[RMDB]
RNA sequence: GGGAACGACUCGAGUAGAGUCGAAAAUAAUGUAUGUAGUCCAAUCUAUUGAAGUACUAGCACACCAUCUCUAGUGAGAUGAUGUGGUUGAGUAGUUCAAUACAUUGGACUACAUAUAUUACUUUUGGUAGACAAGACGUUUCGACGUCUUGUCUACAAAAGAAACAACAACAACAAC
Reactivity to 2A3 in 0.01 (KOAc 150mM, MgCl2 10mM, bicine 150mM(pH8.5), 24C), signal-to-noise 2, nucleotides 027 to 126: u100a000a000u010g010u000a000u000g000u000a000g010u010c000c000a000a030u000c030u010a000u000u000g000a020a000g060u020a000c010u010a040g030c030a000c000a000c020c000a000u020c000u000c000u020a210g090u190g300a000g010a000u000g010a040u010g000u000g050g060u070u070g050a000g000u000a030g080u010u000c000a010a000u000a000c000a010u000u000g010g000a000c000u000a000c000a010u000a000u000a010u010u000a000c000u000u000u000u030g080
Structure probing data (2A3) for a 177-nucleotide construct. It was measured as part of the RMDB library RFM100.